An RNA of 177 nucleotides, treated with 2A3 and read out base by base. Conditions: 150 mM KOAc, 10 mM MgCl2 and 150 mM bicine (pH 8.5), 24 C.
RNA sequence: GGGAACGACUCGAGUAGAGUCGAAAACAUGGGUAAAGCAGUCAGUUCCUGGACGUGGAGAGAGCUGCAGCAUUUGAUAGCUGCUUUACCUGUCUCGUCAAGGAUCAUGGACGAUUGUCCACUACCACGCGACUGACUCAUUCGUGAGUCAGUCGCGAAAAGAAACAACAACAACAAC
Reactivity to 2A3 in 0.01 (KOAc 150mM, MgCl2 10mM, bicine 150mM(pH8.5), 24C), signal-to-noise 1, nucleotides 027 to 126: c030a090u130g000g000g010u040a040a030a000g050c000a000g040u060c010a010g040u020u030c010c000u020g070g060a020c010g160u140g020g040a020g000a000g010a010g010c060u040g010c010a020g010c020a180u070u110u300g210a090u120a090g000c000u010g000c000u040u020u000a100c000c000u010g160u020c030u010c000g090u010c020a040a030g130g010a120u020c000a050u170g120g000a000c050g140a150u050u140g040u030c000c000a040c050u060a090c000c000a030